[RMDB]
An RNA of 177 nucleotides, treated with 2A3 and DMS and read out base by base. For DMS the reverse transcriptase was MarathonRT. For 2A3, 2,812 sequencing reads were counted. The RNA was probed in 150 mM KOAc, 10 mM MgCl2 and 150 mM bicine (pH 8.5) at 24 C. 2A3 adducts were read by reverse transcription with SuperScript II with manganese.
RNA sequence: GGGAACGACUCGAGUAGAGUCGAAAAGAUAUGGACUGCAGGGUGACAUGAUGCUGGCUCGGAAACGAGCCACAUCAACAGCACCUGCAGUCCUAAGUCAAACACGUAGGUCUUCGGACCUACGUGAGCACUACACUAGCUUCGGCUAGUGUAGUGCAAAAGAAACAACAACAACAAC
Reactivity to 2A3 in 0.01 (KOAc 150mM, MgCl2 10mM, bicine 150mM(pH8.5), 24C), signal-to-noise 1, nucleotides 027 to 126: g000a030u010a030u060g000g020a000c000u000g050c000a030g100g300g180u220g050a120c200a300u190g040a020u000g050c300u010g010g000c000u000c000g020g010a020a000a020c000g000a000g000c000c000a000c010a000u000c000a010a030c170a110g030c030a010c030c000u010g010c000a000g000u000c000c000u000a000a000g040u000c000a010a040a030c010a000c010g010u000a010g000g000u000c000u020u100c300g080g020a010c000c000u000a000c000g000u000g010a020
Reactivity to DMS in 0.01 (KOAc 150mM, MgCl2 10mM, bicine 150mM(pH8.5), 24C), signal-to-noise 1, nucleotides 027 to 126: g000a000u000a070u000g000g010a010c010u000g000c000a020g000g030g060u020g000a070c080a090u000g020a050u000g010c300u010g000g000c010u010c000g010g000a030a010a030c000g010a000g090c010c000a010c000a010u010c000a070a040c280a130g000c000a030c020c010u000g000c010a010g020u000c000c000u000a000a070g000u000c010a140a190a260c000a000c000g010u020a000g010g010u000c000u000u020c300g000g000a010c000c000u000a000c000g000u000g020a040